[RMDB]
RNA sequence: GGGAACGACUCGAGUAGAGUCGAAAAAAGGCGGAGCUGUGAUGGCGAGGGAAAUAUAGUACCGAAGUUCCUGAUUCCACGCUGCCAAGAAAAGCCUCUAGUGAGAUGUAGGGUGCCCGUACCGCAACCCUACUUGCGUUUUCGAACGCAAGUAGGGAAAAGAAACAACAACAACAAC
Reactivity to 2A3 in 0.01 (KOAc 150mM, MgCl2 10mM, bicine 150mM(pH8.5), 24C), signal-to-noise 1, nucleotides 027 to 126: a050a040g130g000c000g030g000a060g000c020u000g070u030g150a180u100g040g000c000g040a070g060g000g000a000a010a000u290a030u020a120g090u070a070c010c020g070a130a020g020u020u050c010c000u010g020a070u030u020c000c000a020c000g060c010u030g000c010c000a030a010g120a020a060a000a000g020c010c030u010c040u070a110g040u080g150a120g010a140u110g060u100a060g020g000g080u020g100c000c020c060g000u100a100c020c010g050c000a000a030
Reactivity to DMS in 0.01 (KOAc 150mM, MgCl2 10mM, bicine 150mM(pH8.5), 24C), signal-to-noise 2, nucleotides 027 to 126: a100a070g000g030c010g020g000a100g000c070u020g010u000g030a100u010g020g000c050g030a230g000g000g000a040a010a060u030a140u020a140g010u000a120c020c030g000a130a130g000u010u000c030c000u010g000a130u020u000c010c010a050c050g020c020u000g020c030c030a040a110g020a020a040a080a170g030c040c000u000c030u000a060g020u010g020a090g000a090u000g000u020a010g020g000g000u000g020c030c020c030g000u030a100c030c060g020c080a080a180